[RMDB]
RNA sequence: GGGAACGACUCGAGUAGAGUCGAAAACCCUUCAGCCCGAGUUUCCUCAAACGCUACCGUAUGAGCGGAAUUGGGCGCGUGUUGUACACGAGUUUGUCGCUUACCAUGAGCGGUCGGCGAAGGGCGGGCGGGGUCUACGUUUCGACGUGGACUCUGUAAAAGAAACAACAACAACAAC
Reactivity to 2A3 in 0.01 (KOAc 150mM, MgCl2 10mM, bicine 150mM(pH8.5), 24C), signal-to-noise 9, nucleotides 027 to 126: c000c000c000u030u140c050a020g000c000c000c010g030a030g020u000u030u020c010c000u010c010a070a060a030c010g010c040u040a040c030c020g020u080a060u140g030a010g000c030g010g030a060a100u120u070g070g010g000c000g000c000g000u030g000u000u230g070u100a020c000a000c000g000a020g000u000u040u070g050u030c000g000c010u010u040a090c060c030a080u090g030a020g060c010g000g020u050c090g020g010c010g000a040a030g000g000g010c020g000g000
Reactivity to DMS in 0.01 (KOAc 150mM, MgCl2 10mM, bicine 150mM(pH8.5), 24C), signal-to-noise 9, nucleotides 027 to 126: c010c000c020u040u030c140a100g010c000c000c000g010a060g010u010u000u010c010c000u010c030a060a110a100c020g010c130u020a080c100c030g020u000a100u010g000a020g010c060g010g000a060a090u020u030g010g010g000c030g000c060g010u000g000u010u050g000u030a300c010a040c020g000a080g010u000u000u020g010u010c010g010c000u000u010a110c200c130a110u030g010a110g010c040g000g010u000c070g010g000c010g010a120a080g000g000g010c010g000g000
This 177-nucleotide RNA was probed chemically with 2A3 and DMS. For 2A3, 20,925 sequencing reads were counted. Values cover nucleotides 27 to 126. Conditions: 150 mM KOAc, 10 mM MgCl2 and 150 mM bicine (pH 8.5), 24 C. It was measured as part of the RMDB library OK1LIB.